[RMDB]
RNA sequence: GGGAACGACUCGAGUAGAGUCGAAAAACAACGAUAAUCAGCGACUUACUGUCUGUCACUUUUAAAAUUGUGGAUGAAGACGCAUCACAGGGCACCGUGGAGGACGCAUCUGAGACAACCUUCCACAACAGAACGUUAAGUUCGCUUAACGUUCUGUAAAAGAAACAACAACAACAAC
Reactivity to DMS in 0.01 (KOAc 150mM, MgCl2 10mM, bicine 150mM(pH8.5), 24C), signal-to-noise 5, nucleotides 027 to 126: a070c070a070a070c080g000a110u000a080a070u010c090a050g010c040g000a080c050u000u000a080c120u000g010u000c050u000g010u000c060a090c060u000u010u000u010a020a050a070a100u010u010g010u010g000g010a050u010g010a080a050g010a090c140g000c120a070u000c030a080c050a060g010g010g000c020a080c060c050g040u000g010g000a130g010g000a080c100g000c030a050u000c040u020g000a100g010a060c080a030a070c080c040u000u010c010c010a030c070a080
Reactivity to 2A3 in 0.01 (KOAc 150mM, MgCl2 10mM, bicine 150mM(pH8.5), 24C), signal-to-noise 4, nucleotides 027 to 126: a010c050a040a010c050g080a050u120a190a080u160c050a030g040c020g060a040c030u070u130a060c030u150g060u070c030u050g080u030c030a040c090u090u110u110u230a070a180a130a120u150u090g010u050g040g040a030u050g090a070a030g080a040c050g020c080a030u040c020a020c020a040g020g000g000c020a020c050c030g030u070g090g150a060g000g040a010c040g000c030a060u020c030u060g040a020g020a020c020a000a050c020c000u030u070c020c010a030c000a020